[RMDB]
RNA sequence: GGGAACGACUCGAGUAGAGUCGAAAAGGGUCGGGCGCGUUGGGCCUUGGGGGAAAGCCUCCGGAGCAGGAGGGCACUAGCCGGGCAACCGGCGGGCGCCUUCCAGCAUCGGGGUGCGGACGCCCUUCAGCACAUAUGCUUUCGAGCAUAUGUGCUGAAAAGAAACAACAACAACAAC
Reactivity to 2A3 in 0.01 (KOAc 150mM, MgCl2 10mM, bicine 150mM(pH8.5), 24C), signal-to-noise 1, nucleotides 027 to 126: g050g030g040u130c050g000g020g000c030g020c090g050u060u070g000g010g060c030c050u020u020g000g000g000g020g000a020a030a020g000c000c000u000c000c010g010g020a020g030c020a020g000g000a010g010g010g010c000a000c040u060a040g010c000c000g020g000g000c070a080a060c030c000g030g000c030g000g000g000c060g020c000c000u000u020c000c000a010g010c000a020u010c010g000g010g000g040u220g010c010g000g020a000c020g200c010c000c020u000u010